[RMDB]
RNA sequence: GGGAACGACUCGAGUAGAGUCGAAAACUAGAUGAAGACUAUUUGAUCAGCUAGUUACUUCUAUCGAAUAAAGUGGCCAAAACCAACUCAUUAUAGGUCAUGAUAUAGUAAGCAGGAAGUAUUGGAAACCAUCUUCUAUGUUCGCAUAGAAGAUGGUAAAAGAAACAACAACAACAAC
Reactivity to DMS in 0.01 (KOAc 150mM, MgCl2 10mM, bicine 150mM(pH8.5), 24C), signal-to-noise 4, nucleotides 027 to 126: c010u000a000g010a040u010g020a020a090g010a170c120u000a120u010u010u000g000a130u010c020a030g000c010u000a030g010u000u000a060c030u000u000c030u000a090u010c030g010a090a080u000a030a070a210g020u000g000g010c010c010a060a050a060a180c180c180a050a110c190u000c130a070u000u000a090u000a120g010g020u000c020a020u010g000a200u000a010u000a080g020u000a070a080g020c160a120g000g010a020a030g010u000a050u010u000g000g000a100a080
Reactivity to 2A3 in 0.01 (KOAc 150mM, MgCl2 10mM, bicine 150mM(pH8.5), 24C), signal-to-noise 5, nucleotides 027 to 126: c000u000a000g010a030u040g030a070a060g130a070c060u090a170u300u150u230g080a090u030c000a000g000c010u010a000g000u020u020a010c010u010u000c010u020a160u110c010g050a050a000u050a060a090a000g020u010g000g020c000c020a030a060a050a070c060c030a080a110c060u040c090a070u080u250a100u140a150g010g000u000c000a000u010g030a000u000a000u000a060g100u070a080a030g070c030a040g070g000a030a000g000u040a080u060u210g080g060a160a080